The record gives the reactivity of an RNA of 177 nucleotides to 2A3 and DMS. For 2A3, 2,308 sequencing reads were counted. The DMS profile rests on 9,801 reads. It was measured as part of the RMDB library OK1LIB. The reactions ran in a buffer of 150 mM KOAc, 10 mM MgCl2 and 150 mM bicine (pH 8.5), at 24 C.

RNA sequence: GGGAACGACUCGAGUAGAGUCGAAAAUUUGUGAGGGGGAAGCGUGUCAGUGUAUGCGGAUACAUUAACUUGAAGGGGAGAUCAUAGUGGUGUGGUCCGCCUCUUGUUUGUGGUAAAACCUUGCGAGCUAUAUUAAUUAAUUCGUUAAUUAAUAUAGAAAAGAAACAACAACAACAAC
Reactivity to 2A3 in 0.01 (KOAc 150mM, MgCl2 10mM, bicine 150mM(pH8.5), 24C), signal-to-noise 2, nucleotides 027 to 126: u060u020u080g060u020g010a030g000g010g000g000g010a010a020g010c010g010u050g030u020c010a020g000u010g020u060a020u040g010c000g000g000a000u000a070c010a000u010u030a050a010c010u020u020g070a060a030g010g010g010g010a130g000a020u010c000a000u060a070g150u110g120g050u070g020u020g070g010u020c000c000g040c020c020u010c000u010u020g030u060u030u070g020u050g040g020u050a040a030a030a030c000c000u000u070g030c050g010a030g010
Reactivity to DMS in 0.01 (KOAc 150mM, MgCl2 10mM, bicine 150mM(pH8.5), 24C), signal-to-noise 4, nucleotides 027 to 126: u020u010u010g000u010g000a050g000g000g020g010g030a090a060g010c060g010u000g000u010c030a070g010u010g010u020a040u020g010c100g000g000a080u010a030c040a030u010u020a060a050c050u010u000g010a060a050g010g000g000g020a170g000a050u010c010a040u010a100g020u040g010g010u020g030u000g000g020u000c020c030g010c010c050u000c020u010u010g010u000u010u010g010u010g010g010u010a050a050a110a130c050c010u000u010g010c060g010a110g020